[RMDB]
RNA sequence: GGGAACGACUCGAGUAGAGUCGAAAAUUCCUUCUUAAUUUUUUGACAGUCCCUCCUAGAUACUUUCACAGUCUAGGAGGGUCUUUAAGGUUGUCACUUGCAACCUUGAUAAGCUCUCUUUUUAGCCUAUAAGGACGUCAUUCGUGACGUCCUUAUAAAAAGAAACAACAACAACAAC
Reactivity to 2A3 in 0.01 (KOAc 150mM, MgCl2 10mM, bicine 150mM(pH8.5), 24C), signal-to-noise 2, nucleotides 027 to 126: u020u010c000c000u020u160c030u040u260a300a300u140u060u060u070u060u170g150a030c000a020g000u000c000c010c000u020c000c000u000a000g000a000u060a090c020u120u250u280c100a060c100a060g030u040c000u000a000g000g000a000g000g000g000u000c000u020u000u000a000a000g030g060u000u000g050u060c020a030c250u040u110g000c020a010a000c000c000u010u000g090a130u040a050a020g010c000u060c020u010c090u000u070u080u040u300a110g010c040c040
Reactivity to DMS in 0.01 (KOAc 150mM, MgCl2 10mM, bicine 150mM(pH8.5), 24C), signal-to-noise 1, nucleotides 027 to 126: u010u000c000c010u000u120c160u040u020a030a000u000u000u000u090u000u020g000a030c230a090g000u000c000c000c000u000c000c030u000a020g000a020u000a060c210u000u050u010c220a180c270a080g020u030c000u000a010g000g000a010g000g000g000u000c010u000u000u000a010a000g030g010u000u050g010u000c210a170c260u000u000g040c000a000a010c040c000u000u000g000a000u030a070a010g000c120u010c020u000c000u000u000u000u020u020a100g000c050c140